[RMDB]
RNA sequence: GGGAACGACUCGAGUAGAGUCGAAAAUUUAAAGGAGAAAAGAUAUUUUAGACUCUUUUUAAUAACAAGCAUAUUGGGGAAACAUGCUUCUUAAGUGUUUCACGUCUUAAGUGUUGGCAAUGUGCUAGACACUACCCUCACUCUGGAAUUAUCCACAGGUACUACUGCUAUUCGUAGCAGUAGUACCAAAAGAAACAACAACAACAAC
Reactivity to 2A3 in 0.01 (KOAc 150mM, MgCl2 10mM, bicine 150mM(pH8.5), 24C), signal-to-noise 1, nucleotides 027 to 156: u020u020u040a000a010a010g030g020a000g030a020a090a040a040g030a040u130a170u130u180u020u040a060g030a020c000u000c000u040u080u010u000u140a060a020u080a060a030c010a010a000g030c000a000u020a080u090u130g030g000g010g060a040a000a060c060a040u020g010c000u070u020c000u090u080a130a060g050u030g040u050u050u040c090a090c050g050u000c000u060u060a040a020g000u000g040u080u060g040g000c010a110a200u110g020u060g030c010u020a030g030a060c020a040c050u060a010c020c010c010u020c020a040c010u010c000u020g030g040a160a100u150u050a080u160c000c050a020c020a060